[RMDB]
RNA sequence: GGGAACGACUCGAGUAGAGUCGAAAAGAUAUGGACAAUAGGGAGCGUCCAUCUCGGAAACGAGAUGACGCUUUGAUCUAUAAGUCCUAAGUCAAAACGGACGUAACGCUUCGGCGUUACGUCCGAAGUUAAAUAGUCACUUCGGUGACUAUUUAACAAAAGAAACAACAACAACAAC
Reactivity to DMS in 0.01 (KOAc 150mM, MgCl2 10mM, bicine 150mM(pH8.5), 24C), signal-to-noise 4, nucleotides 027 to 126: g000a010u000a060u010g000g000a010c000a250a050u000a020g000g000g010a000g020c000g020u010c160c090a010u000c000u000c010g010g000a020a020a050c000g010a010g000a000u000g000a020c000g020c000u000u000u010g010a070u010c010u000a010u000a140a120g010u000c000c000u010a010a120g000u010c010a080a070a100a250c030g000g000a010c000g000u000a000a000c000g010c000u000u010c230g030g010c010g000u000u010a010c000g000u000c000c000g000a000a040
Reactivity to 2A3 in 0.01 (KOAc 150mM, MgCl2 10mM, bicine 150mM(pH8.5), 24C), signal-to-noise 2, nucleotides 027 to 126: g010a000u030a020u060g000g000a000c010a040a010u010a020g040g000g010a030g000c000g000u030c170c040a020u000c000u000c000g000g000a010a010a010c010g000a000g000a010u010g000a000c000g000c000u090u060u010g000a010u000c000u010a000u030a220a100g000u000c000c000u000a030a010g020u020c020a030a020a090a130c030g030g020a000c030g000u010a000a000c010g000c030u060u120c300g170g000c010g000u000u010a000c030g000u000c000c010g000a010a000